[RMDB]
RNA sequence: GGGAACGACUCGAGUAGAGUCGAAAAUAGAUGUAUCAAUAGAAGUCAAAAUUAGAGAUCGCGAUAUGAACGGGCUUGUACGUUCCUACGCUAAAAUAAUACAAGAUAAUUUUUAGUUCACACUUCUUUCUGUAGAACUAAAAAUAUUUAAGAAAGACAAUAGCAGUAAGUUCGCUUACUGCUAUUGAAAAGAAACAACAACAACAAC
Reactivity to DMS in 0.01 (KOAc 150mM, MgCl2 10mM, bicine 150mM(pH8.5), 24C), signal-to-noise 1, nucleotides 027 to 156: u000a090g050a070u000g000u000a080u000c080a060a050u000a020g000a100a030g010u000c020a030a060a070a220u000u010a040g000a070g000a120u010c050g020c010g000a130u000a060u000g020a020a010c030g020g000g010c040u000u000g030u000a080c010g000u000u000c000c000u000a140c100g020c020u020a020a080a010a040u010a040a090u010a150c020a040a070g000a090u000a030a130u020u000u000u000u000a020g000u000u000c010a040c010a020c050u010u000c170u000u000u010c030u020g000u000a080g040a000a000c000u020a000a000a010a040a010u000a030u000u000u000a070a160g000a110a030a180g000a170
Reactivity to 2A3 in 0.01 (KOAc 150mM, MgCl2 10mM, bicine 150mM(pH8.5), 24C), signal-to-noise 3, nucleotides 027 to 156: u110a030g100a050u100g020u050a070u170c010a010a010u000a020g010a010a000g000u010c000a000a000a160a300u070u050a040g010a020g030a070u140c090g000c010g070a090u020a020u030g010a000a000c000g020g000g000c000u010u020g000u010a000c000g000u000u000c000c010u010a010c000g000c030u100a040a060a060a090u250a100a080u060a080c000a000a010g020a030u070a080a080u110u010u020u000u010a000g000u000u000c010a030c010a020c080u050u040c000u010u090u010c020u030g020u030a060g000a000a000c000u000a000a000a000a010a000u050a020u020u080u030a050a040g010a000a020a010g000a010
Source information:
Chemical mapping of a 207-nucleotide RNA with DMS and 2A3. The RNA was probed in 150 mM KOAc, 10 mM MgCl2 and 150 mM bicine (pH 8.5) at 24 C. For DMS the reverse transcriptase was MarathonRT. The DMS profile rests on 2,447 reads. The 2A3 profile rests on 4,385 reads. Values cover nucleotides 27 to 156.